[RMDB]
RNA sequence: GGGAACGACUCGAGUAGAGUCGAAAAACUGGAGCAUCAGAUGAGAGCUUCUGUAUCACCAGGCAGCUGUUUGACGGGGAUAAAGUGUUGGAGGCAGAGGUCACAUGGGGGCCACCCUCCCAACCUCCGCGUCUACCUAAUUCGUUAGGUAGACGCGAAAAGAAACAACAACAACAAC
Reactivity to DMS in 0.01 (KOAc 150mM, MgCl2 10mM, bicine 150mM(pH8.5), 24C), signal-to-noise 1, nucleotides 027 to 126: a070c050u010g020g010a070g030c070a110u010c070a110g000a200u010g010a030g030a030g010c030u000u000c020u020g020u000a050u010c080a180c090c050a090g000g000c050a050g000c030u010g000u000u000u000g000a100c080g010g000g000g000a140u010a050a040a040g040u020g010u010u010g090g000a150g000g000c050a110g000a090g010g000u000c100a060c050a120u020g030g020g000g000g000c060c020a090c110c030c010u000c060c000c040a090a010c010c050u000c090